[RMDB]
RNA sequence: GGGAACGACUCGAGUAGAGUCGAAAAAGAAGACGUCCUCGGUUUCCCAGCGGGUUGAUAGGGCGUCGUUAACUCUCACAGUAGAGAGGUAGACCCGCUGAGCCGCUUCCUCGGGAGUUCGUGCAAGUGAUGUCACCAAGUUCGCUUGGUGACAUCAAAAAGAAACAACAACAACAAC
Reactivity to DMS in 0.01 (KOAc 150mM, MgCl2 10mM, bicine 150mM(pH8.5), 24C), signal-to-noise 1, nucleotides 027 to 126: a130g000a120a100g010a000c030g000u000c000c010u000c160g000g000u000u000u020c030c020c020a040g010c030g000g020g050u000u000g000a110u000a030g000g010g010c010g010u000c010g030u020u000a060a180c000u000c000u020c040a140c130a180g030u010a150g000a020g000a010g000g020u000a300g000a020c000c020c030g000c010u000g000a060g000c050c030g000c110u000u010c010c000u000c110g050g010g000a040g000u000u040c040g020u010g000c090a150a130g010